An RNA of 177 nucleotides, treated with DMS and 2A3 and read out base by base.
[RMDB]
RNA sequence: GGGAACGACUCGAGUAGAGUCGAAAAGAUAUGGAGCAUAAGCUGACAUCGAUCGUACUGUCUCGGAAACGAGAUUACGGGAGUCACUAUGCUCCUAAGUCAAAAGGCAAAGCGUUCGCGCUUUGCCCUAUCUGCCGUACUUCGGUACGGCAGAUAGAAAAGAAACAACAACAACAAC
Reactivity to DMS in 0.01 (KOAc 150mM, MgCl2 10mM, bicine 150mM(pH8.5), 24C), signal-to-noise 3, nucleotides 027 to 126: g000a010u010a020u020g000g000a010g020c000a020u010a020a050g030c300u000g010a010c010a300u010c210g010a010u010c010g020u010a010c300u010g000u000c000u000c000g010g000a000a000a040c000g020a020g000a020u000u000a010c010g030g000g010a000g010u000c010a030c020u000a010u000g000c010u000c000c000u000a010a050g000u010c000a120a090a120a110g000g000c000a000a010a010g010c010g030u000u010c220g010c030g010c000u000u000u000g010c000c010
Reactivity to 2A3 in 0.01 (KOAc 150mM, MgCl2 10mM, bicine 150mM(pH8.5), 24C), signal-to-noise 2, nucleotides 027 to 126: g020a000u020a010u050g000g010a010g030c020a020u030a100a090g050c300u040g030a000c000a050u300c100g000a020u000c010g000u000a000c100u070g010u000c000u000c010g000g000a000a000a000c000g000a020g010a010u010u000a000c010g010g030g000a020g010u000c000a000c000u010a010u010g010c010u000c000c010u000a000a000g010u000c020a000a000a100a070g000g020c000a000a000a010g000c020g070u130u250c300g000c010g020c150u000u020u000g010c030c000

For 2A3, 6,643 sequencing reads were counted.
The data come from the RNA Mapping Database (RMDB), library TTRDES.